[RMDB]
RNA sequence: GGGAACGACUCGAGUAGAGUCGAAAAGAGCAACAUAUGAUCGGAAUUUUGAGAGUUUUUUUAUAGAUCGUAUAUUGGAACUCACAAGUGAGCAUGCAUGUGCUCUCUCUCCGCUGCAUGGCUCGCAGGGAUAAGUAUAGUUCGCUAUACUUAUCCCAAAAGAAACAACAACAACAAC
Reactivity to DMS in 0.01 (KOAc 150mM, MgCl2 10mM, bicine 150mM(pH8.5), 24C), signal-to-noise 5, nucleotides 027 to 126: g000a050g010c010a050a040c070a050u010a020u000g010a020u000c010g000g020a070a110u010u020u010u010g010a090g010a020g010u000u000u000u020u000u010u000a040u000a110g000a070u020c070g020u000a000u010a050u000u000g000g000a040a070c010u000c020a090c150a050a070g000u010g010a040g000c010a000u000g010c060a040u020g030u000g000c040u000c020u010c050u000c030u010c070c030g020c070u000g030c020a020u000g000g000c010u010c020g020c080a170
Reactivity to 2A3 in 0.01 (KOAc 150mM, MgCl2 10mM, bicine 150mM(pH8.5), 24C), signal-to-noise 5, nucleotides 027 to 126: g030a010g010c030a010a090c000a040u040a020u040g020a010u010c010g050g080a080a050u000u040u040u050g070a070g000a010g020u010u000u000u000u000u010u010a060u020a020g040a050u030c010g000u010a000u000a010u010u100g030g020a050a030c010u020c010a070c030a120a060g020u000g030a000g000c000a000u010g000c010a010u150g030u040g020c000u000c000u000c000u000c000u000c000c000g000c000u000g000c000a000u000g050g010c000u000c000g000c000a020